Annotation
An RNA of 177 nucleotides, treated with DMS and 2A3 and read out base by base. The reactions ran in a buffer of 150 mM KOAc, 10 mM MgCl2 and 150 mM bicine (pH 8.5), at 24 C. The data come from the RNA Mapping Database (RMDB), library RFMREP.

RNA sequence: GGGAACGACUCGAGUAGAGUCGAAAAGGUCGAUUAUGAGAACCUUAUAUUGUCCUGAAGAGAGGUGAUGACUUAAAAAUCAUGCCCAAUAGGAUUACGCUGAGGCCCAAACUCGUGUUCGCACGAGGUAUAUUGACUCGUUCGCGAGUCAAUAUACAAAAGAAACAACAACAACAAC
Reactivity to DMS in 0.01 (KOAc 150mM, MgCl2 10mM, bicine 150mM(pH8.5), 24C), signal-to-noise 4, nucleotides 027 to 126: g000g020u000c020g010a160u010u010a130u020g000a230g000a080a080c010c010u000u000a060u010a110u000u000g010u000c010c000u010g010a110a120g020a110g000a110g000g010u000g010a030u010g000a050c040u000u020a030a060a090a100a170u000c010a020u000g010c000c010c010a080a120u000a040g020g010a090u010u000a060c120g020c080u000g010a080g000g000c000c020c050a030a100a220c010u000c000g020u000g010u000u010c200g010c010a020c000g000a010g000
Reactivity to 2A3 in 0.01 (KOAc 150mM, MgCl2 10mM, bicine 150mM(pH8.5), 24C), signal-to-noise 5, nucleotides 027 to 126: g010g020u020c010g050a170u120u120a140u300g110a060g020a110a040c000c000u030u000a060u010a030u080u120g010u000c010c010u020g080a120a020g160a010g030a080g020g040u160g170a060u020g020a040c010u090u140a040a040a010a010a060u000c010a010u050g030c000c000c020a050a040u080a100g030g020a030u050u070a050c070g010c070u050g020a020g040g080c000c000c040a040a060a050c000u000c010g020u000g030u030u040c240g010c030a000c010g000a000g030